[RMDB]
RNA sequence: GGGAACGACUCGAGUAGAGUCGAAAAGUUGCUUCGGCAACAGUAUUGGGGUCGUGGACGGUGAGGUUUAGACAUGCUCUGAAGCCUCCACGGAGCAACAGCUAAACUACCCACCACCGCCACGACGGAGGCACCCGUGAUAGGGAUUCGUCCCUAAACUCUCUUAGUGAUUCGUCACUAAGAGAGUAAAAGAAACAACAACAACAAC
Reactivity to DMS in 0.01 (KOAc 150mM, MgCl2 10mM, bicine 150mM(pH8.5), 24C), signal-to-noise 2, nucleotides 027 to 156: g020u010u000g000c050u000u000c210g090g020c050a040a050c000a090g000u010a120u000u010g020g010g020g010u010c010g010u010g010g000a140c030g010g020u000g000a170g040g000u010u000u000a020g030a100c040a270u010g000c010u000c000u010g010a070a130g040c010c020u000c020c040a290c020g020g000a010g020c010a050a030c080a110g000c000u010a020a040a040c020u010a080c010c010c040a300c050c010a010c010c000g000c020c020a030c000g010a020c020g010g030a040g050g040c000a140c000c000c020g010u000g020a170u040a120g010g040g010a160u000u000c110g010u010c000c000c000u000a020a100
Reactivity to 2A3 in 0.01 (KOAc 150mM, MgCl2 10mM, bicine 150mM(pH8.5), 24C), signal-to-noise 6, nucleotides 027 to 156: g010u000u010g000c020u050u110c250g130g000c000a000a000c010a020g060u090a210u160u290g090g000g020g020u010c010g000u020g010g030a200c020g000g000u010g010a130g030g020u010u010u010a020g010a080c100a160u180g010c000u000c000u000g050a090a010g000c010c000u000c010c010a020c010g000g000a000g000c000a010a120c030a100g140c010u020a000a010a000c020u100a120c060c080c070a030c020c010a000c000c000g010c000c000a000c000g000a000c000g000g000a000g010g000c010a040c000c010c010g070u070g110a190u090a090g030g000g010a020u070u090c100g090u040c030c000c000u010a060a030